Structure probing data (2A3 and DMS) for a 177-nucleotide construct. Values cover nucleotides 27 to 126. It was measured as part of the RMDB library M2PK50.
[RMDB]
RNA sequence: GGGAACGACUCGAGUAGAGUCGAAAACAGUGAGACUUCGGUCUCACUGAAAUGACUAUGGACCAUGACGAGGACGAAGAUGCGGAGGACGACGAGGAACAAAAACAGCAAGGUUCGCCUUGCUGAACAGAAUUGACUUCUUCGGAAGUCAAUUCUGAAAAGAAACAACAACAACAAC
Reactivity to 2A3 in 0.01 (KOAc 150mM, MgCl2 10mM, bicine 150mM(pH8.5), 24C), signal-to-noise 1, nucleotides 027 to 126: c010a000g010u020g010a020g000a010c040u060u140c290g110g010u000c000u000c010a000c000u000g000a020a000a010u110g020a010c010u070a080u200g060g000a010c040c040a050u070g020a050c050g020a040g040g000a000c030g060a060a040g040a070u050g080c010g010g040a070g000g000a010c030g020a000c000g030a020g060g040a010a100c050a060a060a000a020a020c010a020g000c000a000a020g000g000u020u050c130g050c010c000u000u000g000c000u000g000a010a010
Reactivity to DMS in 0.01 (KOAc 150mM, MgCl2 10mM, bicine 150mM(pH8.5), 24C), signal-to-noise 2, nucleotides 027 to 126: c020a020g000u020g010a010g000a020c000u010u010c170g050g020u000c000u000c000a000c000u000g000a040a050a090u010g020a100c070u000a060u000g000g010a100c060c020a090u000g000a090c120g010a070g010g050a100c130g000a080a020g000a060u000g000c040g000g020a030g020g000a050c060g000a050c090g000a030g000g010a050a020c120a060a060a040a090a120c000a000g000c000a020a010g000g010u000u010c210g000c010c000u000u000g010c000u000g000a050a100

Overview
2A3 adducts were read by reverse transcription with SuperScript II with manganese.